[RMDB]
RNA sequence: GGGAACGACUCGAGUAGAGUCGAAAAAUCCGUGGAUAUCGGGUGCGCACCGUUCCUCCUCCGGCUGUUCUCCUUCACAGCUAUGACCCAUGCGCCGCACAGGCAGUGUCCCGCUUCGUGUGCAAAAAAAACCGCCAGUACUUCGGUACUGGCGGAACAAAUCAACUAGGUUCGCCUAGUUGAUUUGAAAAGAAACAACAACAACAAC
Reactivity to 2A3 in 0.01 (KOAc 150mM, MgCl2 10mM, bicine 150mM(pH8.5), 24C), signal-to-noise 3, nucleotides 027 to 156: a000u020c020c030g020u050g020g030a070u020a050u200c010g000g020g020u060g020c010g010c010a060c030c020g030u040u030c010c020u010c000c020u060c030c060g030g000c000u030g010u080u050c050u080c110c000u160u150c080a010c010a030g010c000u070a080u230g070a100c000c040c020a050u120g010c020g010c000c040g010c010a010c000a010g060g000c020a010g020u020g060u130c000c000c010g010c010u030u040c090g100u020g000u000g000c020a060a000a000a000a020a000a010a130c010c010g010c010c010a000g020u000a000c000u030u120c150g110g000u010a000c000u000g000g010c000g000g010a000a000
Reactivity to DMS in 0.01 (KOAc 150mM, MgCl2 10mM, bicine 150mM(pH8.5), 24C), signal-to-noise 2, nucleotides 027 to 156: a050u000c030c030g010u010g030g020a110u000a060u010c050g000g030g040u000g020c060g030c020a080c030c040g050u000u000c050c010u000c030c020u010c010c080g010g000c010u000g040u000u010c060u000c090c060u010u000c090a000c020a080g000c050u000a090u010g010a120c020c010c020a110u000g000c070g010c030c080g030c080a040c050a070g000g000c080a110g020u000g010u000c010c000c020g040c050u000u000c090g000u000g010u000g020c030a000a000a000a040a080a070a080a160c010c000g010c000c000a020g000u000a010c010u000u000c250g040g020u000a000c010u000g020g030c020g000g010a000a010
An RNA of 207 nucleotides, treated with 2A3 and DMS and read out base by base. The DMS profile rests on 3,642 reads. The reactions ran in a buffer of 150 mM KOAc, 10 mM MgCl2 and 150 mM bicine (pH 8.5), at 24 C. It was measured as part of the RMDB library M2RFPK. The 2A3 profile rests on 2,720 reads. For 2A3 the reverse transcriptase was SuperScript II with manganese.